RNA sequence: GGGAACGACUCGAGUAGAGUCGAAAACAUAGGGAGUUCGCUCCCUAUGAAAAUGCCGGCUGCAAGAAAAGUGCUUCAAAGAGUGGGAGCACUGCCGAUAAAAAAGGGCGAUGUUCGCAUCGCCCAAGAUAAGACAUUCGUUCGCGAAUGUCUUAUCAAAAGAAACAACAACAACAAC
Reactivity to 2A3 in 0.01 (KOAc 150mM, MgCl2 10mM, bicine 150mM(pH8.5), 24C), signal-to-noise 4, nucleotides 027 to 126: c000a000u010a000g000g000g000a010g000u040u050c090g090c060u010c000c000c000u010a000u000g000a010a010a000a010u080g060c040c010g000g030c020u070g030c060a070a020g040a120a170a030a020g000u010g010c000u010u020c020a090a160a100g160a100g090u190g050g000g000a000g000c000a000c000u000g000c000c000g040a030u180a040a160a010a020a010a040g000g000g000c010g000a000u010g010u040u070c210g000c100a000u000c000g000c000c000c000a000a000
Reactivity to DMS in 0.01 (KOAc 150mM, MgCl2 10mM, bicine 150mM(pH8.5), 24C), signal-to-noise 3, nucleotides 027 to 126: c010a010u000a000g010g010g000a010g010u000u010c300g020c010u000c000c010c000u000a000u000g010a040a060a070a060u000g020c090c000g030g010c020u000g000c130a110a100g000a070a060a080a080g030u000g000c010u000u000c010a080a120a170g010a160g020u010g000g000g000a000g000c000a010c000u000g020c020c010g000a170u000a010a040a070a040a080a100g000g000g000c010g010a020u000g010u010u000c220g020c010a020u000c000g010c000c000c000a000a010
The record gives the reactivity of an RNA of 177 nucleotides to 2A3 and DMS. The RNA was probed in 150 mM KOAc, 10 mM MgCl2 and 150 mM bicine (pH 8.5) at 24 C. Source: RMDB library M2PK50, as collected in RNAgym. Reactivities are given for positions 27 through 126. The 2A3 profile rests on 10,460 reads. For 2A3 the reverse transcriptase was SuperScript II with manganese.